The record gives the reactivity of an RNA of 177 nucleotides to 2A3 and DMS. The reactions ran in a buffer of 150 mM KOAc, 10 mM MgCl2 and 150 mM bicine (pH 8.5), at 24 C. It was measured as part of the RMDB library OK2TST. DMS (dimethyl sulfate) methylates the pairing face of unpaired adenines and cytosines. 2A3 adducts were read by reverse transcription with SuperScript II with manganese.
RNA sequence: GGGAACGACUCGAGUAGAGUCGAAAACAGUGCCUCAGCACCGACAAUUUUGCCAUUGGCUAAGGAGACAAUCGGCUGAUAGUGCACGCAAAUAUCACGAUUUUCGAUAGCAUCCUGCAGCCGAUGAAUUAAAUGCGACUUUCGAGUCGCAUUUAAUAAAAGAAACAACAACAACAAC
Reactivity to 2A3 in 0.01 (KOAc 150mM, MgCl2 10mM, bicine 150mM(pH8.5), 24C), signal-to-noise 2, nucleotides 027 to 126: c020a010g020u020g070c010c030u100c060a020g010c030a040c030c020g080a040c050a120a090u060u120u190u220g050c000c020a060u050u130g030g000c020u030a040a020g080g020a060g030a030c060a100a070u000c010g010g000c020u020g040a090u040a080g050u030g020c010a010c060g010c020a070a050a020u130a050u070c110a040c200g100a080u000u010u100u050c020g030a050u060a070g000c010a030u060c010c050u040g030c030a000g020c000c000g000a000u030g000a000
Reactivity to DMS in 0.01 (KOAc 150mM, MgCl2 10mM, bicine 150mM(pH8.5), 24C), signal-to-noise 3, nucleotides 027 to 126: c100a110g030u000g030c010c050u000c080a070g000c030a040c110c090g010a090c110a090a130u010u000u000u000g010c060c030a100u000u010g010g010c020u010a080a060g000g010a140g010a090c140a100a050u010c000g010g000c030u000g010a050u000a030g000u000g010c050a090c060g010c080a040a030a060u000a040u010c140a090c280g000a100u000u000u000u000c040g000a050u000a110g020c070a060u000c100c050u000g000c030a020g010c000c000g010a010u000g010a060